RNA sequence: GGGAACGACUCGAGUAGAGUCGAAAAGCGUACUACGUCGACUUGGAUUUAGAGCUGGAGCUUUACGGACCACUCCCAAAUAGGAGUGGUCAGUAAAGCGUUGAAAGCUCUUGUCAGUCGACGUAUCGCAAAAGGACGUACCUUCGGGUACGUCCAACAUCCUGCAUUUGUUCGCAAAUGCAGGAUGAAAAGAAACAACAACAACAAC
Reactivity to 2A3 in 0.01 (KOAc 150mM, MgCl2 10mM, bicine 150mM(pH8.5), 24C), signal-to-noise 4, nucleotides 027 to 156: g010c010g040u090a110c060u000a010c020g010u000c010g000a010c000u100u250g300g000a090u300u300u150a010g000a000g010c000u000g000g000a010g000c010u020u000u000a000c030g010g000a000c010c000a010c000u030c000c040c040a180a300a120u300a140g000g000a000g000u000g000g010u000c010a010g000u000a000a020a000g000c000g000u040u010g000a000a000a000g000c000u000c000u000u000g000u020c010a000g000u000c010g010a010c000g010u000a000u000c000g000c010a050a060a000a030g010g000a000c010g010u020a000c010c050u070u190c300g040g000g000u000a000c000g010u000c000c000a000a000
Reactivity to DMS in 0.01 (KOAc 150mM, MgCl2 10mM, bicine 150mM(pH8.5), 24C), signal-to-noise 1, nucleotides 027 to 156: g030c020g050u010a050c100u000a010c000g020u000c010g020a050c020u040u020g040g010a060u000u010u000a030g020a030g030c000u000g000g010a300g000c010u010u000u000a010c020g000g030a030c000c010a010c000u000c000c010c020a070a080a270u010a030g000g010a020g020u000g010g010u010c010a030g000u010a010a010a000g000c000g000u000u000g010a090a140a170g000c000u000c000u000u000g020u000c030a050g010u000c000g000a020c010g020u010a000u000c000g040c040a060a040a100a120g010g000a040c020g040u000a010c010c000u000u000c300g070g030g000u000a000c000g000u000c000c000a010a030
An RNA of 207 nucleotides, treated with 2A3 and DMS and read out base by base. Reactivities are given for positions 27 through 156. Values are in units of 0.01, from 0 to 300, in steps of 10.